[RMDB]
RNA sequence: GGGAACGACUCGAGUAGAGUCGAAAAUUCAGUCGGAGCAUUAUCUGGAAAAUUUCGUGCAGUCAACCUUCGAUGCCCUUCCAGCGGAAAGCCUCUCUGGUAGCACGCUUGUGGUGUCUGGCGAUGGUCAGUUACGAGCAUUCGUGCUCGUAACUGAAAAAGAAACAACAACAACAAC
Reactivity to 2A3 in 0.01 (KOAc 150mM, MgCl2 10mM, bicine 150mM(pH8.5), 24C), signal-to-noise 1, nucleotides 027 to 126: u070u040c000a000g070u040c020g020g030a010g030c040a050u070u040a090u210c020u050g110g010a080a120a010a040u150u190u080c060g020u140g070c010a010g020u010c050a080a020c000c030u100u130c020g000a040u110g040c010c000c040u050u020c000c000a010g000c040g010g060a030a050a030g010c000c000u030c010u010c010u020g060g030u050a030g000c030a020c080g070c070u000u070g020u090g120g010u030g010u040c030u050g020g020c040g040a060u040g000g090
Reactivity to DMS in 0.01 (KOAc 150mM, MgCl2 10mM, bicine 150mM(pH8.5), 24C), signal-to-noise 2, nucleotides 027 to 126: u000u020c060a070g020u000c030g020g000a070g040c110a060u000u010a050u000c040u010g000g020a070a060a080a120u000u010u000c070g020u010g010c090a070g010u010c060a070a110c060c040u010u010c070g010a110u010g010c020c050c020u000u020c020c030a100g000c150g000g000a040a090a110g040c080c030u000c080u020c030u000g010g000u000a050g010c090a050c080g000c110u010u000g040u000g050g010u010g000u000c020u010g000g000c060g000a060u000g000g000
About this RNA:
The record gives the reactivity of an RNA of 177 nucleotides to 2A3 and DMS. The reactions ran in a buffer of 150 mM KOAc, 10 mM MgCl2 and 150 mM bicine (pH 8.5), at 24 C. For DMS, 1,441 sequencing reads were counted.